Annotation
Chemical mapping of a 177-nucleotide RNA with DMS and 2A3. It was measured as part of the RMDB library OK1LIB. The reactions ran in a buffer of 150 mM KOAc, 10 mM MgCl2 and 150 mM bicine (pH 8.5), at 24 C. The 2A3 profile rests on 1,971 reads.
[RMDB]
RNA sequence: GGGAACGACUCGAGUAGAGUCGAAAACAACAGCCUUCAUGGGAAUACGAUACCAAUGGCUUCCCACUCAGGUGCGGAAGUCGACUCACCGCCGUUACCACGACCCCGACGACCACACCGUCAGCUGCGGUUGCUGUCAUUUCGAUGACAGCAACCGAAAAGAAACAACAACAACAAC
Reactivity to DMS in 0.01 (KOAc 150mM, MgCl2 10mM, bicine 150mM(pH8.5), 24C), signal-to-noise 1, nucleotides 027 to 126: c010a090a090c100a120g000c000c000u000u000c110a140u000g000g000g020a040a020u020a110c010g000a160u040a160c040c020a090a040u000g000g020c120u000u010c000c000c000a040c070u000c240a140g100g060u000g050c140g060g000a060a040g040u000c000g010a040c140u000c070a050c000c020g000c040c010g020u000u060a130c000c070a090c030g000a090c070c020c000c120g000a060c150g000a040c030c000a040c000a100c010c040g000u000c060a150g040c080u060g000
Reactivity to 2A3 in 0.01 (KOAc 150mM, MgCl2 10mM, bicine 150mM(pH8.5), 24C), signal-to-noise 4, nucleotides 027 to 126: c050a010a020c010a070g040c000c020u120u110c080a130u120g050g040g060a100a060u160a120c050g060a040u030a150c040c040a090a100u110g000g000c000u020u010c000c010c000a010c020u110c050a070g170g000u050g060c150g010g050a040a000g010u020c020g040a040c030u010c050a060c020c010g010c000c010g020u010u040a050c010c020a050c090g080a070c000c000c010c030g050a040c010g020a020c020c010a040c010a010c020c000g060u070c010a020g050c060u080g000